Structure probing data (DMS) for a 307-nucleotide construct.
[RMDB]
RNA sequence: GGGAACGACUCGAGUAGAGUCGAAAAUGGAAAUUCUGGACACCCGCUGGUCCUCAGCUACAUCGACCUGUCAGCCUGGUGUUACUACUGUCAGGCCUAUGUCCACCACCAGGCUCUCCUAGAUGUGAAGAACAUCGCCCACCAGAACAAGUUUGGGGAGGAUAUGCCCCACCCACACGUUUAAACGAAUUCGGGCUCGGUACCCGGGGAUCCUCUAGAGUCGACCUGCAGGCAUGCAAGCUGAUCCGGCUGCUAACAAAGCCCGAACCGUCUGUUUCGACAGACGGAAAAGAAACAACAACAACAAC
Reactivity to DMS in 0.01 (KOAc 150mM, MgCl2 10mM, bicine 150mM(pH8.5), 24C), signal-to-noise 2, nucleotides 027 to 266: u000g010g000a160a200a130u010u000c010u000g000g000a130c060a120c150c190c070g010c040u000g010g010u020c070c010u000c100a030g000c060u030a120c020a060u010c090g020a170c110c140u000g000u020c180a030g020c000c000u000g020g000u000g010u000u010a030c120u020a110c080u030g000u000c150a020g000g020c070c100u010a120u030g010u000c110c030a160c220c040a000c000c010a000g000g030c020u020c020u000c010c060u000a120g010a000u000g010u000g000a160a060g040a260a040c000a050u000c020g000c080c040c060a080c060c080a020g000a030a080c160a100a120g010u000u010u000g020g030g000g000a060g020g010a130u010a080u020g020c050c060c000c000a110c080c030c030a050c120a160c160g030u010u000u000a030a060a130c090g010a120a270u010u000c000g000g000g030c040u000c130g000g000u000a060c160c080c060g020g010g000g000a080u000c120c020u020c030u030a110g010a030g010u010c020g000a110c070c060u000g000c040a040g000g000c090a030u010g050c090a050a060g010c020u010g000a160u010c050c020g000g000c010u000g030c020u000a060a100c080a050a080a020g000c020c010c000g010a040a110
Background:
The RNA was probed in 150 mM KOAc, 10 mM MgCl2 and 150 mM bicine (pH 8.5) at 24 C. The data come from the RNA Mapping Database (RMDB), library POS240. For DMS, 3,787 sequencing reads were counted.